This 177-nucleotide RNA was probed chemically with 2A3 and DMS. For 2A3 the reverse transcriptase was SuperScript II with manganese. DMS adducts were read by reverse transcription with MarathonRT. Reactivities are given for positions 27 through 126. For 2A3, 3,061 sequencing reads were counted.

RNA sequence: GGGAACGACUCGAGUAGAGUCGAAAAUGACAUAGGGCUAAGGUCUUUUUCUUUGAGCUGAUUUCUGGUUUUGUUUUCUUAAAGUGGCAUAAGAAUUCAAAGACAUUUUGAGGAAGGCUGAGUGCAGAUGUUCCCAUUUAUUCGUAAAUGGGAACAUAAAAGAAACAACAACAACAAC
Reactivity to 2A3 in 0.01 (KOAc 150mM, MgCl2 10mM, bicine 150mM(pH8.5), 24C), signal-to-noise 3, nucleotides 027 to 126: u100g020a010c020a050u120a060g080g020g000c020u040a060a080g060g000u070c010u040u070u010u010u020c020u020u070u100g050a030g000c030u040g050a130u030u130u050c040u050g020g020u000u010u030u020g020u000u040u040u000c010u010u040a060a070a070g060u050g080g000c020a030u030a040a020g000a040a010u000u050c040a070a020a020g020a010c040a050u060u150u070u140g030a020g000g010a020a000g020g000c020u030g020a010g070u080g000c030a020g040
Reactivity to DMS in 0.01 (KOAc 150mM, MgCl2 10mM, bicine 150mM(pH8.5), 24C), signal-to-noise 5, nucleotides 027 to 126: u010g000a090c060a090u000a100g010g000g020c030u000a090a180g010g010u000c010u000u000u010u010u010c020u000u010u010g010a070g010c090u010g000a110u000u000u000c050u010g000g010u000u000u000u000g000u010u000u000u000c010u000u000a020a060a150g020u000g000g010c060a140u000a020a030g000a030a030u000u010c020a010a030a030g010a050c040a060u000u010u010u000g010a090g010g000a050a060g000g010c020u000g010a090g020u000g010c070a110g010
The data come from the RNA Mapping Database (RMDB), library OK2TST. Conditions: 150 mM KOAc, 10 mM MgCl2 and 150 mM bicine (pH 8.5), 24 C.